[RMDB]
RNA sequence: GGGAACGACUCGAGUAGAGUCGAAAAACAUGCUGGCCAACCCAACCCCACGAUCCUCCAUCGGCAUGAUCAUGAUGUGUUCACAAAUAUCAGGCCAGUAAAUCACCAUGCUCGUGCUGGUAAAGGCAACUUAUGCCCAAGUUCGCUUGGGCAUAAAACUGUUUACAUCUUUCGAGAUGUAAACAGUAAAAGAAACAACAACAACAAC
Reactivity to DMS in 0.01 (KOAc 150mM, MgCl2 10mM, bicine 150mM(pH8.5), 24C), signal-to-noise 3, nucleotides 027 to 156: a080c050a080u000g000c000u000g010g020c030c050a110a180c060c030c030a100a140c050c000c000c020a090c140g010a110u000c020c020u000c020c040a060u000c040g040g000c000a050u010g000a040u010c000a050u000g010a030u000g000u000g040u000u010c090a190c070a080a090a160u000a110u000c080a130g010g040c040c030a090g020u000a010a070a100u000c010a040c000c010a030u000g010c090u010c010g020u000g000c000u010g020g000u000a020a030a050g020g020c080a050a110c040u000u000a020u000g030c000c000c010a010a030g000u000u000c270g050c010u000u000g020g000g000c010a000u000a000a010a050
Reactivity to 2A3 in 0.01 (KOAc 150mM, MgCl2 10mM, bicine 150mM(pH8.5), 24C), signal-to-noise 7, nucleotides 027 to 156: a000c040a030u080g010c000u000g000g000c000c010a040a040c090c010c030a050a080c020c010c010c020a080c080g090a140u100c010c030u040c040c030a040u030c010g000g000c000a010u010g010a010u010c000a000u010g050a080u090g060u010g030u170u160c090a030c070a170a150a020u220a080u130c080a060g020g000c000c000a000g010u020a010a040a020u070c000a000c010c000a000u010g010c000u000c010g000u000g020c010u000g010g000u050a140a130a010g040g000c020a050a020c040u030u010a000u010g000c000c000c010a010a000g000u020u060c110g010c110u000u010g030g000g000c000a000u000a000a000a000

Description
Structure probing data (DMS and 2A3) for a 207-nucleotide construct. Values cover nucleotides 27 to 156. The RNA was probed in 150 mM KOAc, 10 mM MgCl2 and 150 mM bicine (pH 8.5) at 24 C. The data come from the RNA Mapping Database (RMDB), library M2RFOK. High DMS reactivity at an A or C suggests that its Watson-Crick edge is free. DMS adducts were read by reverse transcription with MarathonRT.